[RMDB]
Conditions: 150 mM KOAc, 10 mM MgCl2 and 150 mM bicine (pH 8.5), 24 C. An RNA of 177 nucleotides, treated with 2A3 and DMS and read out base by base. For 2A3 the reverse transcriptase was SuperScript II with manganese. Values cover nucleotides 27 to 126. The DMS profile rests on 2,392 reads. The data come from the RNA Mapping Database (RMDB), library RFM100.
RNA sequence: GGGAACGACUCGAGUAGAGUCGAAAAGGGGUGCCGAGAGGUGCGCGCUGCCGGCCCCAGAGGCCGCCUUUGAGCCGUCGGGGCGGCUUCAUUAAGCAGCGCUAACAAGGCGUACAAAUGCCGGGCCAACAACUAUGUGCUUCGGCACAUAGUUGUUAAAAGAAACAACAACAACAAC
Reactivity to 2A3 in 0.01 (KOAc 150mM, MgCl2 10mM, bicine 150mM(pH8.5), 24C), signal-to-noise 3, nucleotides 027 to 126: g010g020g020g010u070g010c010c030g070a070g030a030g060g040u040g050c040g010c010g000c010u000g000c000c000g060g040c020c010c010c000a010g010a010g000g010c010c000g020c010c030u030u050u260g080a080g050c070c110g140u110c030g000g010g000g010c000g000g000c020u020u000c030a060u050u030a020a000g000c000a000g000c010g000c010u000a020a010c040a020a070g010g000c030g050u120a040c160a130a120a030u150g010c020c000g050g010g000c050c030
Reactivity to DMS in 0.01 (KOAc 150mM, MgCl2 10mM, bicine 150mM(pH8.5), 24C), signal-to-noise 2, nucleotides 027 to 126: g000g000g050g140u000g020c010c000g010a180g000a200g000g020u020g020c140g020c010g010c000u000g010c050c000g000g020c000c030c000c060a050g000a070g000g000c000c000g020c000c030u000u040u130g000a180g020c030c120g000u020c060g020g000g040g000c020g040g000c000u000u030c000a020u050u030a080a250g000c000a000g000c030g010c000u010a150a110c140a100a080g010g010c000g000u010a050c230a040a190a020u010g000c010c010g020g010g050c090c100